[RMDB]
The record gives the reactivity of an RNA of 177 nucleotides to DMS. It was measured as part of the RMDB library OK2TRN.
RNA sequence: GGGAACGACUCGAGUAGAGUCGAAAACUCAUCUAGCAGCUUUUAAAGAGGCCGUUGUUAAAGGUAUCAAUGAGUACUUUGGAAAGAAUUUUACAAGCAAUGAUAUCCGUGAAGGGAUUGUAGGCUGGAUACACAACAGCUUCGGCUGUUGUGUAUCAAAAGAAACAACAACAACAAC
Reactivity to DMS in 0.01 (KOAc 150mM, MgCl2 10mM, bicine 150mM(pH8.5), 24C), signal-to-noise 1, nucleotides 027 to 126: c020u000c020a110u000c080u010a110g000c030a090g020c000u010u020u000u000a100a050a130g010a060g000g010c030c060g010u010u000g020u000u010a060a060a090g010g020u000a010u000c020a050a060u010g020a110g010u000a070c060u000u000u000g000g000a050a050a110g010a060a110u000u020u010u000a070c100a040a040g020c080a010a080u020g000a060u000a040u010c010c010g010u000g010a090a150g000g000g010a080u000u000g020u010a060g000g030c040u010g020